[RMDB]
The record gives the reactivity of an RNA of 177 nucleotides to DMS and 2A3. For DMS the reverse transcriptase was MarathonRT. The 2A3 profile rests on 1,022 reads. 2A3 adducts were read by reverse transcription with SuperScript II with manganese. For DMS, 4,060 sequencing reads were counted.
RNA sequence: GGGAACGACUCGAGUAGAGUCGAAAAUUUUCCACAAUGCAAAUUAAUUCAACAAUAUACCUCUUAUUUAAUUAGUAAAAAGCUUAAUAAUAGCCUUCUGAUAAGCAAAUGUUGCAUUUUAGAGGUGUAAUUGGAUUUUAUUCGUAAAAUCCAAUUAAAAAGAAACAACAACAACAAC
Reactivity to DMS in 0.01 (KOAc 150mM, MgCl2 10mM, bicine 150mM(pH8.5), 24C), signal-to-noise 3, nucleotides 027 to 126: u040u020u020u030c000c000a100c220a110a060u040g000c060a040a120a040u030u010a030a070u020u020c180a060a120c060a060a060u010a040u010a030c010c000u010c000u010u000a040u010u020u010a050a080u000u020a070g000u010a060a090a110a140a130g000c010u000u000a020a120u020a120a100u020a100g000c010c040u010u000c060u030g020a130u010a050a070g010c050a060a100a060u030g010u000u000g010c090a100u000u000u020u010a010g010a000g000g010u000g010
Reactivity to 2A3 in 0.01 (KOAc 150mM, MgCl2 10mM, bicine 150mM(pH8.5), 24C), signal-to-noise 3, nucleotides 027 to 126: u040u050u010u000c010c000a030c040a020a040u110g040c000a030a010a240u180u140a110a100u190u130c040a030a050c010a160a060u060a040u080a140c000c000u020c000u050u000a090u140u170u050a170a120u110u080a000g060u040a060a100a140a080a070g010c000u060u020a080a010u100a290a020u070a300g000c010c030u070u040c000u040g060a040u030a060a040g020c040a030a110a170u200g050u070u090g000c010a020u030u030u000u100a000g000a000g000g010u010g000